RNA sequence: GGGAACGACUCGAGUAGAGUCGAAAAUAUAACAAGAGUGUCCUAACAAAUCAAUAGAAUCCGAAAGUCAAUCGGACAAAAUUCGCUUGAGCGGUGCAGGCGUACGGCUAGCUUGCAUGAGCUAGACGACCGUCCGAAAAUUCGUUUUCGGACGGUCAAAAGAAACAACAACAACAAC
Reactivity to DMS in 0.01 (KOAc 150mM, MgCl2 10mM, bicine 150mM(pH8.5), 24C), signal-to-noise 2, nucleotides 027 to 126: u030a090u030a180a150c070a080a070g010a050g050u000g000u020c000c020u020a090a120c150a150a100a050u040c080a020a110u040a080g000a060a130u000c010c020g040a010a070a140g010u000c290a040a100u000c000g000g010a030c130a050a090a020a080u040u000c010g000c030u000u000g010a070g000c040g010g010u030g000c050a000g000g000c010g000u010a140c080g000g000c000u000a010g020c020u010u000g000c240a060u070g010a040g010c000u000a020g000a050c080
Reactivity to 2A3 in 0.01 (KOAc 150mM, MgCl2 10mM, bicine 150mM(pH8.5), 24C), signal-to-noise 5, nucleotides 027 to 126: u170a040u070a080a090c130a150a030g090a060g130u090g040u060c010c010u100a090a050c050a040a090a040u140c040a060a120u070a140g080a060a040u000c040c000g040a100a040a040g150u130c100a050a130u010c010g000g000a010c030a060a100a010a020u090u080c040g080c130u100u090g030a050g060c030g020g050u070g010c020a010g000g000c010g050u070a060c010g120g000c050u030a010g000c000u020u070g010c050a040u120g020a010g020c000u010a020g020a050c040